[RMDB]
RNA sequence: GGGAACGACUCGAGUAGAGUCGAAAAACGGAUGAGGACCUCGGGAGGCAGCGAAGAGAGUACCCGUUGGAGGGAAAGAGACGCGGUGCGCCUGGAAUGGGGUAAGGCAGGACCUUCCGAGGGAUGAUCUCACGAAAUCAUUCGUGAUUUCGUGAGAAAAAGAAACAACAACAACAAC
Reactivity to 2A3 in 0.01 (KOAc 150mM, MgCl2 10mM, bicine 150mM(pH8.5), 24C), signal-to-noise 2, nucleotides 027 to 126: a020c060g030g020a090u090g030a120g150g100a040c000c000u010c010g000g000g000a000g020g000c040a030g070c050g060a160a000g120a040g000a030g100u020a030c010c030c030g010u020u090g220g120a210g070g020g050a040a110a000g110a020g000a010c040g040c090g000g060u030g010c000g010c020c000u000g050g180a160a090u170g010g010g000g010u110a050a000g110g000c020a020g040g070a190c000c010u000u000c000c000g000a000g030g010g000a000u000g000a000
Reactivity to DMS in 0.01 (KOAc 150mM, MgCl2 10mM, bicine 150mM(pH8.5), 24C), signal-to-noise 2, nucleotides 027 to 126: a110c080g020g010a100u010g000a180g010g000a130c010c010u010c000g010g010g000a000g000g010c050a080g010c070g010a120a090g000a150g030a120g030u010a070c020c010c020g020u000u000g010g000a220g000g020g000a070a090a170g010a110g010a050c010g020c040g020g010u000g000c040g010c040c010u010g010g030a070a070u010g010g000g020g010u000a050a060g010g000c020a120g010g010a090c010c000u000u010c000c000g000a000g020g000g010a030u000g010a160
Chemical mapping of a 177-nucleotide RNA with 2A3 and DMS. 2A3 adducts were read by reverse transcription with SuperScript II with manganese. The reactions ran in a buffer of 150 mM KOAc, 10 mM MgCl2 and 150 mM bicine (pH 8.5), at 24 C.